An RNA of 207 nucleotides, treated with 2A3 and read out base by base.
It was measured as part of the RMDB library OK3TST.
The RNA was probed in 150 mM KOAc, 10 mM MgCl2 and 150 mM bicine (pH 8.5) at 24 C.
[RMDB]
RNA sequence: GGGAACGACUCGAGUAGAGUCGAAAAGGGAUUACAGGUGUGUGCUGCCACACCAGGCUAAUUUUUGUGUUUGUAGUAAAGAUGGGGGUUUCACCAUGUUGGCCAGGCUGGUCUGAAACUCCUGACCUCAAGUGAUCCACCUGCCUCGGCCUCCCGAGACAGCACUAUAUUUCGAUAUAGUGCUGUCAAAAGAAACAACAACAACAAC
Reactivity to 2A3 in 0.01 (KOAc 150mM, MgCl2 10mM, bicine 150mM(pH8.5), 24C), signal-to-noise 2, nucleotides 027 to 156: g050g010g000a020u070u070a070c060a110g000g000u020g000u000g010u000g110c080u050g080c090c010a010c010a000c020c030a020g040g000c000u060a090a070u090u130u100u170u090g100u040g050u060u180u090g040u070a060g020u050a010a100a050g070a130u210g000g000g000g000g000u010u000u000c030a030c000c020a020u090g040u090u020g060g000c000c000a010g000g030c020u070g010g020u010c070u060g010a000a000a000c020u050c000c010u020g070a060c010c050u090c080a090a010g010u000g040a000u000c000c000a010c000c040u020g010c000c010u040c090g000g000c000c010u010c030c010c000g020a020